This 177-nucleotide RNA was probed chemically with DMS and 2A3. The RNA was probed in 150 mM KOAc, 10 mM MgCl2 and 150 mM bicine (pH 8.5) at 24 C.

RNA sequence: GGGAACGACUCGAGUAGAGUCGAAAAAAGUUGAUAUGGAUUUACUCCGAGGAGACGAACUACCACGAACAGGGGAAACUCUACCCGUGGCGUCUUCGUUUGACGAGUAAGUCCUAAGUCAACAAAAGUAUUGCAUAUUCUUCGGAAUAUGCAAUACAAAAGAAACAACAACAACAAC
Reactivity to DMS in 0.01 (KOAc 150mM, MgCl2 10mM, bicine 150mM(pH8.5), 24C), signal-to-noise 2, nucleotides 027 to 126: a050a070g010u000u000g000a010u000a010u010g000g000a030u000u000u010a020c010u000c000c020g000a030g020g010a020g000a010c000g010a080a000c040u010a300c020c000a020c030g000a030a200c140a150g000g020g010g000a000a010a030c000u000c000u000a140c300c300c000g030u000g010g000c000g000u000c000u000u000c010g000u000u000u000g000a220c300g000a020g000u000a010a020g010u000c010c010u000a020a060g000u000c000a000a000c000a050a050a070a050
Reactivity to 2A3 in 0.01 (KOAc 150mM, MgCl2 10mM, bicine 150mM(pH8.5), 24C), signal-to-noise 1, nucleotides 027 to 126: a000a000g020u010u000g000a010u020a020u010g000g010a010u020u000u000a000c010u010c010c010g020a020g010g000a000g020a010c010g000a010a020c060u200a030c080c000a000c000g010a040a010c030a070g000g030g010g000a000a000a000c010u010c000u000a020c030c020c000g000u000g000g010c010g000u000c000u060u000c020g000u120u180u080g010a000c000g000a010g000u000a000a000g000u020c000c000u000a000a000g000u000c000a010a000c000a000a060a000a000